[RMDB]
RNA sequence: GGGAACGACUCGAGUAGAGUCGAAAAGGGGUCUUUCGAUCCCUUGGAUUUAAUCAGCUUUUGACGGACUGAAGCCUCCACGGUCCGAUAAGCUGAUUUGUCAGGGAUACCGAAAGACGGAGGCACCCAAAUCUUCUCUGGUUCGCCAGAGAAGAAAUCGAGUACUAUAGUUCGCUAUAGUACUCGAAAAAGAAACAACAACAACAAC
Reactivity to DMS in 0.01 (KOAc 150mM, MgCl2 10mM, bicine 150mM(pH8.5), 24C), signal-to-noise 2, nucleotides 027 to 156: g000g010g050g000u000c000u010u010u010c010g010a060u000c020c000c030u000u000g000g020a070u000u010u000a010a040u000c000a020g020c020u000u000u000u000g020a200c090g010g000a020c000u010g000a050a120g010c020c010u010c010c000a300c040g010g010u010c000c000g020a050u000a020a020g010c000u010g010a020u000u000u020g000u000c040a040g000g000g000a060u010a040c130c000g000a030a020a040g020a040c010g040g040a080g040g050c030a110c010c000c010a060a120a130u010c000u010u000c000u000c000u000g000g000u010u000c300g020c040c000a040g010a040g030a010a010g000a010a070a110
Reactivity to 2A3 in 0.01 (KOAc 150mM, MgCl2 10mM, bicine 150mM(pH8.5), 24C), signal-to-noise 4, nucleotides 027 to 156: g030g000g010g010u000c020u010u020u000c010g020a010u000c010c000c000u020u070g030g000a020u110u140u290a030a020u030c020a010g000c030u070u080u210u260g210a110c030g000g000a000c000u020g050a100a020g090c010c020u030c030c010a050c030g000g000u010c000c000g010a020u030a070a000g000c000u000g010a000u020u020u060g060u030c040a000g000g000g020a000u030a200c080c090g000a030a000a000g000a000c000g000g020a000g000g000c020a040c010c000c000a080a130a150u010c000u010u000c000u000c000u010g000g060u060u040c210g060c070c000a010g000a000g000a000a000g000a010a000a000
The data come from the RNA Mapping Database (RMDB), library RNAMAK. An RNA of 207 nucleotides, treated with DMS and 2A3 and read out base by base. The RNA was probed in 150 mM KOAc, 10 mM MgCl2 and 150 mM bicine (pH 8.5) at 24 C. For 2A3, 4,114 sequencing reads were counted. For DMS the reverse transcriptase was MarathonRT.